Source information: Structure probing data (DMS and 2A3) for a 177-nucleotide construct. It was measured as part of the RMDB library TTRDEL. For DMS the reverse transcriptase was MarathonRT. For DMS, 815 sequencing reads were counted.

[RMDB]
RNA sequence: GGGAACGACUCGAGUAGAGUCGAAAAGAUAUGGAUCAAGCAUCGAUCUUACGGACUCGGAAACGAGUUUAAGGGAGCUUAUCCUAAGUCAAAGUAACGUCUUAAUGUUCGCAUUAAGACGUUACAAUCCAUGGUUUGCGUUCGCGCAAACCAUGGAAAAAGAAACAACAACAACAAC
Reactivity to DMS in 0.01 (KOAc 150mM, MgCl2 10mM, bicine 150mM(pH8.5), 24C), signal-to-noise 1, nucleotides 027 to 126: g020a060u000a300u010g000g010a000u010c180a010a030g050c000a280u000c120g020a160u010c030u000u000a030c300g020g000a030c000u000c000g000g000a040a070a180c000g010a010g000u000u000u000a010a070g000g020g010a000g030c010u050u000a080u000c000c000u010a010a140g000u010c010a100a100a110g000u000a010a030c000g010u000c000u000u000a000a010u010g000u010u000c120g030c000a000u000u010a000a000g020a010c000g000u000u010a010c000a030a050
Reactivity to 2A3 in 0.01 (KOAc 150mM, MgCl2 10mM, bicine 150mM(pH8.5), 24C), signal-to-noise 1, nucleotides 027 to 126: g020a020u060a040u170g000g020a020u040c290a050a020g000c010a060u300c030g130a100u010c060u000u040a020c170g170g040a010c000u010c040g040g000a120a060a020c010g020a060g010u040u040u040a020a010g040g020g000a020g010c000u030u010a010u050c010c020u010a090a050g040u040c050a130a020a000g020u000a000a000c000g000u040c000u000u040a000a010u020g050u080u000c300g000c230a010u010u010a000a020g000a010c010g010u000u000a000c000a010a010